Structure probing data (2A3 and DMS) for a 177-nucleotide construct. For 2A3, 7,585 sequencing reads were counted.
RNA sequence: GGGAACGACUCGAGUAGAGUCGAAAAAGUCGCUGGUGGUGGCCGUCGACCGGGCCGACGUCGCCGACCUGCGCACUGUCGCGGACUGGUUGUCCGCACAGGGGCACCCGGUGAUCUGGGAGUCGGCGUACAAGUUUCAGUUCGCUGAAACUUGUACAAAAGAAACAACAACAACAAC
Reactivity to 2A3 in 0.01 (KOAc 150mM, MgCl2 10mM, bicine 150mM(pH8.5), 24C), signal-to-noise 7, nucleotides 027 to 126: a000g090u050c020g000c050u040g000g070u040g000g060u050g080g000c070c040g020u020c020g010a060c010c020g020g040g030c020c000g010a010c010g030u040c020g000c010c010g060a060c010c010u040g000c030g000c030a060c020u010g010u030c140g000c000g000g010a010c010u090g170g220u250u250g040u030c000c000g010c000a000c000a010g000g000g030g000c010a050c010c010c000g000g020u150g050a100u100c060u110g030g010g000a060g030u030c020g000g000c020
Reactivity to DMS in 0.01 (KOAc 150mM, MgCl2 10mM, bicine 150mM(pH8.5), 24C), signal-to-noise 3, nucleotides 027 to 126: a120g010u020c020g010c020u010g000g000u020g000g020u000g010g010c070c040g030u000c030g000a090c030c030g000g010g020c040c010g000a040c050g040u000c030g000c000c000g000a050c070c150u010g000c020g010c030a100c000u010g000u010c140g040c000g010g000a020c000u020g010g020u040u040g010u000c000c000g010c000a000c000a000g010g000g010g030c020a170c200c060c010g010g020u000g000a060u040c090u020g000g000g000a160g000u010c010g000g000c060
2A3 adducts were read by reverse transcription with SuperScript II with manganese.